[RMDB]
RNA sequence: GGGAACGACUCGAGUAGAGUCGAAAACUGAAAUUUUGGGGAACAAACCCAAAUGGUAAUCUGAAGUCUUAUUUAGGAAACAAAACUUGUGUGACUAGAAAUAGACCAACUCCUAAAUAUAUUCUGGUUUAUGUGCAUUCUGGUGUAAAACACAUGACAUCACGAUUUAGUUCGCUAAAUCGUGAUGAAAAGAAACAACAACAACAAC
Reactivity to 2A3 in 0.01 (KOAc 150mM, MgCl2 10mM, bicine 150mM(pH8.5), 24C), signal-to-noise 3, nucleotides 027 to 156: c010u030g030a080a090a140u100u040u010u040g040g000g000g040a100a160c060a140a110a060c070c000c030a020a000a030u040g000g020u070a060a040u050c030u050g060a090a030g120u070c040u080u040a050u030u000u040a020g010g050a030a120a070c090a070a110a060a080c110u120u040g020u030g020u020g180a060c000u000a020g010a060a120a070u060a020g020a030c000c010a020a050c030u040c000c000u030a030a060a000u010a010u000a040u110u010c040u040g030g020u000u060u050a040u070g050u030g010c050a090u100u050c060u140g100g010u070g020u110a060a120a090a020c020a020c000a020u060g020a020
Reactivity to DMS in 0.01 (KOAc 150mM, MgCl2 10mM, bicine 150mM(pH8.5), 24C), signal-to-noise 2, nucleotides 027 to 156: c050u000g000a070a160a300u000u000u010u000g000g000g020g010a180a260c150a160a120a160c010c030c000a010a020a050u020g030g040u000a150a110u010c020u000g050a110a110g000u000c070u000u020a040u020u000u000a030g010g000a100a170a280c010a110a080a030a070c110u030u000g000u010g030u000g000a140c030u000a030g000a040a070a210u000a040g000a070c030c030a020a090c160u000c030c000u000a010a010a110u000a050u000a050u000u000c030u010g010g000u010u000u000a020u010g000u000g010c040a130u000u000c020u000g000g000u000g020u000a100a030a300a030c150a010c010a020u020g010a160
This 207-nucleotide RNA was probed chemically with 2A3 and DMS. It was measured as part of the RMDB library OK3TST. For 2A3 the reverse transcriptase was SuperScript II with manganese. The RNA was probed in 150 mM KOAc, 10 mM MgCl2 and 150 mM bicine (pH 8.5) at 24 C.